Chemical mapping of a 177-nucleotide RNA with DMS.

RNA sequence: GGGAACGACUCGAGUAGAGUCGAAAAGAUAUGGAGUCAGGAUAAUCGAUCCUUCACAGAGCUACCGGUCGGAAACGACCGAGUAGCGACGAAGUGACUGGGAUCGAUUAUCCUGACUCCUAAGUCAGCAUAGUAUAUUCUUCGGAAUAUACUAUGCAAAAGAAACAACAACAACAAC
Reactivity to DMS in 0.01 (KOAc 150mM, MgCl2 10mM, bicine 150mM(pH8.5), 24C), signal-to-noise 4, nucleotides 027 to 126: g000a050u000a300u010g000g000a020g010u000c010a000g030g020a010u010a010a030u000c010g020a020u010c030c010u000u000c020a010c000a070g020a230g020c000u010a010c000c000g020g040u010c010g020g000a120a080a220c010g020a010c000c010g000a090g030u000a010g010c010g010a060c270g000a160a080g000u010g000a040c300u000g020g010g010a010u000c000g010a010u000u000a010u000c000c000u000g000a000c000u000c000c000u000a000a040g000u000c040a180